[RMDB]
RNA sequence: GGGAACGACUCGAGUAGAGUCGAAAAAGUGGCUCACGCCUGUAAUCUCAGUGCUUUGGGAGGCUGAGGCCGGAGGAGGGCUGGAGUCCUUGAGUGCGAGACCAGCCUGGGCAACAUAGUGAGACCCAUCAUCUGAAUAGUUCGCUAUUCAGAUGAUAAAAGAAACAACAACAACAAC
Reactivity to DMS in 0.01 (KOAc 150mM, MgCl2 10mM, bicine 150mM(pH8.5), 24C), signal-to-noise 8, nucleotides 027 to 126: a080g020u000g010g010c010u000c030a050c090g010c050c030u000g010u000a150a120u000c010u000c020a060g020u010g010c030u000u010u000g000g000g010a120g000g000c010u000g010a060g000g020c030c050g000g010a070g010g000a150g010g000g000c010u000g010g000a090g000u000c030c020u000u000g010a130g020u000g020c080g000a060g010a130c020c010a020g000c020c010u000g000g010g010c040a110a060c080a080u000a140g010u000g000a080g000a150c010c010c030
Reactivity to 2A3 in 0.01 (KOAc 150mM, MgCl2 10mM, bicine 150mM(pH8.5), 24C), signal-to-noise 5, nucleotides 027 to 126: a000g100u110g030g000c010u020c020a020c050g010c010c020u020g050u060a080a130u020c010u000c050a070g030u130g160c010u090u100u120g110g050g010a080g080g010c030u050g080a030g010g010c010c050g010g020a050g030g070a050g000g030g000c010u040g030g020a050g060u040c030c000u050u050g120a190g300u150g050c080g010a020g040a060c000c010a000g000c000c010u020g000g020g000c030a100a040c010a100u110a050g040u030g020a030g030a070c010c000c010
An RNA of 177 nucleotides, treated with DMS and 2A3 and read out base by base.
For DMS the reverse transcriptase was MarathonRT.